Structure probing data (2A3 and DMS) for a 207-nucleotide construct. The data come from the RNA Mapping Database (RMDB), library RNAMAK.

RNA sequence: GGGAACGACUCGAGUAGAGUCGAAAACUGUGGUUCGCCACAGAACAACGCGUACUACAGCGUGAACUACGCUCAGUAUGCAACAGCAGCUCCCAAAUAGGAGCUGACAUGUGCAUGGGCGCACGCUGUAUCGCCUAAGGGUCAAUUCGUUGACCAAAUUAACCACUUGAUUCGUCAAGUGGUUAAUAAAAGAAACAACAACAACAAC
Reactivity to 2A3 in 0.01 (KOAc 150mM, MgCl2 10mM, bicine 150mM(pH8.5), 24C), signal-to-noise 8, nucleotides 027 to 156: c010u020g000u020g010g040u080u100c240g050c050c010a010c000a000g060a020a020c100a030a030c060g020c020g060u140a110c070u010a000c010a010g000c010g000u000g010a080a050c110u150a050c300g010c010u000c010a130g150u180a180u230g020c030a060a060c000a020g020c000a000g000c000u030c020c050c020a130a260a080u300a120g000g000a000g000c000u000g070a090c030a160u090g000u000g010c020a040u020g000g010g000c000g000c000a000c000g000c010u010g000u000a000u140c000g000c000c010u090a080a100g140g000g010u000c000a000a040u110u110c160g100u130u030g000a010c000c000a050a040
Reactivity to DMS in 0.01 (KOAc 150mM, MgCl2 10mM, bicine 150mM(pH8.5), 24C), signal-to-noise 4, nucleotides 027 to 156: c010u010g010u000g010g010u000u000c300g000c020c000a020c000a010g020a090a100c100a080a110c120g000c030g040u000a060c070u000a000c000a030g010c000g050u000g010a080a240c050u010a160c030g020c010u000c000a080g030u020a100u020g010c020a040a060c020a180g010c010a020g030c000u000c000c000c010a080a200a270u000a040g000g030a030g040c010u000g000a020c050a100u010g030u010g000c030a130u000g000g000g020c010g010c000a030c030g020c030u000g000u000a000u000c010g000c010c090u000a110a130g000g010g020u010c030a020a090u000u000c130g030u000u000g000a040c000c000a020a070
Background:
For DMS, 10,421 sequencing reads were counted.